[RMDB]
RNA sequence: GGGAACGACUCGAGUAGAGUCGAAAAUCAAACGAUUUCGAUCGUUUGAAACGGACCACUCCUGCGGGAGUUAAGGCCAUACGGACAGCCGGGUCGACUGCCAGUCAUUCGGUUUCGACCGAAUGAAAUGUUAUGACAUGUUCGCAUGUCAUAACAUAAAAGAAACAACAACAACAAC
Reactivity to 2A3 in 0.01 (KOAc 150mM, MgCl2 10mM, bicine 150mM(pH8.5), 24C), signal-to-noise 7, nucleotides 027 to 126: u020c000a000a000a010c010g010a010u040u080u190c230g100a010u010c000g010u000u010u010g000a020a000a010c070g050g020a030c000c000a010c010u020c010c000u060g020c290g100g000g000a000g000u020u110a060a030g010g000c010c010a050u070a090c070g060g020a010c020a010g030c010c000g010g000g000u010c010g010a100c050u130g020c010c000a020g070u020c000a000u010u000c000g020g040u020u050u120c200g080a030c000c000g000a000a000u010g000a030a020
Reactivity to DMS in 0.01 (KOAc 150mM, MgCl2 10mM, bicine 150mM(pH8.5), 24C), signal-to-noise 9, nucleotides 027 to 126: u000c000a010a000a010c000g010a010u000u000u010c190g010a020u000c000g010u000u000u010g010a010a090a120c180g000g010a040c010c010a090c010u000c000c000u000g040c190g030g010g010a010g010u000u010a040a050g020g010c010c010a120u000a120c140g000g000a030c030a170g000c010c010g010g010g010u000c010g000a060c140u010g000c010c020a140g000u000c010a010u000u000c000g000g000u000u000u010c170g000a030c000c000g000a010a000u000g010a020a050
This 177-nucleotide RNA was probed chemically with 2A3 and DMS. It was measured as part of the RMDB library M2PK50. Values cover nucleotides 27 to 126. For DMS the reverse transcriptase was MarathonRT. For 2A3 the reverse transcriptase was SuperScript II with manganese.